This 177-nucleotide RNA was probed chemically with DMS and 2A3. For DMS, 13,033 sequencing reads were counted. For 2A3 the reverse transcriptase was SuperScript II with manganese. The 2A3 profile rests on 8,379 reads.
[RMDB]
RNA sequence: GGGAACGACUCGAGUAGAGUCGAAAAGGAGAGCCAAAAAUUCAGCUAACUAACAAUGUUUGGAAAUGUUUUUUUGGAAGACUCAGAAAACAGUUAGGAUUGGAAGACGAGGAGGAUGCAGACUCUAGUAAUGAUUUAGGUUCGCCUAAAUCAUUACAAAAGAAACAACAACAACAAC
Reactivity to DMS in 0.01 (KOAc 150mM, MgCl2 10mM, bicine 150mM(pH8.5), 24C), signal-to-noise 8, nucleotides 027 to 126: g020g000a040g020a150g010c010c020a000a010a030a050a050u000u000c030a050g010c080u000a060a080c020u010a080a120c160a140a090u000g010u000u000u000g010g000a060a100a100u000g000u000u000u000u000u000u000u000g010g010a070a050g020a090c020u010c040a100g000a070a050a050a050c110a040g000u010u010a060g000g000a080u010u000g000g000a030a050g000a060c090g010a050g010g010a060g000g010a060u000g010c090a070g000a090c070u000c050u000a160
Reactivity to 2A3 in 0.01 (KOAc 150mM, MgCl2 10mM, bicine 150mM(pH8.5), 24C), signal-to-noise 5, nucleotides 027 to 126: g070g010a020g000a000g020c000c000a010a020a000a010a010u050u030c030a010g030c030u050a030a040c000u060a050a070c050a180a300u170g060u040u070u060g050g030a120a230a210u040g060u010u050u030u000u010u020u030g030g020a070a040g060a070c010u000c060a020g140a020a090a010a010c040a010g030u070u100a040g030g040a080u040u110g010g020a050a000g000a030c040g020a030g010g020a010g020g010a010u070g020c010a010g010a110c010u020c000u060a010